Annotation:
Structure probing data (DMS and 2A3) for a 207-nucleotide construct. DMS adducts were read by reverse transcription with MarathonRT. Source: RMDB library OK3TST, as collected in RNAgym.
[RMDB]
RNA sequence: GGGAACGACUCGAGUAGAGUCGAAAACUUCACAUAAGGAGGUGAGUGCAUAUAUGACCAAAUUACAUGCCCAUUUACGAGUAUCCGGCGAGCGACAAUUUGUAGUAUUUACUCUACCCGCCUAUACUUUUGUUCGCAUAGAAGCUUUUGAUGAAUAGAGAAGACAUAAAUUCGUUUAUGUCUUCUCAAAAGAAACAACAACAACAAC
Reactivity to DMS in 0.01 (KOAc 150mM, MgCl2 10mM, bicine 150mM(pH8.5), 24C), signal-to-noise 2, nucleotides 027 to 156: c070u000u030c030a100c070a130u020a130a130g020g010a090g030g010u000g010a090g030u010g010c040a100u000a100u000a080u010g010a270c120c040a020a080a120u000u000a030c030a060u000g010c020c010c010a140u000u010u010a100c080g020a060g020u000a040u000c090c090g020g040c070g000a040g010c040g010a130c090a040a100u000u000u010g010u010a190g020u010a080u010u020u010a060c050u000c030u010a070c000c000c000g010c020c020u010a070u000a030c040u000u000u000u000g010u010u000c070g010c050a070u000a150g000a090a150g020c050u000u000u000u010g000a080u000g010a080a080u000a190
Reactivity to 2A3 in 0.01 (KOAc 150mM, MgCl2 10mM, bicine 150mM(pH8.5), 24C), signal-to-noise 4, nucleotides 027 to 156: c000u080u070c020a020c020a080u150a050a060g050g010a020g030g010u040g020a050g030u050g030c050a020u110a020u040a040u200g060a090c050c030a060a090a030u150u090a040c040a020u080g020c030c010c000a030u090u070u100a060c030g010a010g020u010a020u100c130c060g010g010c020g020a040g040c060g070a080c070a100a090u050u020u140g010u010a030g010u020a060u050u190u090a030c040u050c000u030a040c010c000c000g050c010c020u020a020u000a040c010u060u080u050u140g050u070u120c040g000c020a020u020a120g080a070a030g040c030u120u110u100u080g080a100u080g030a090a100u050a090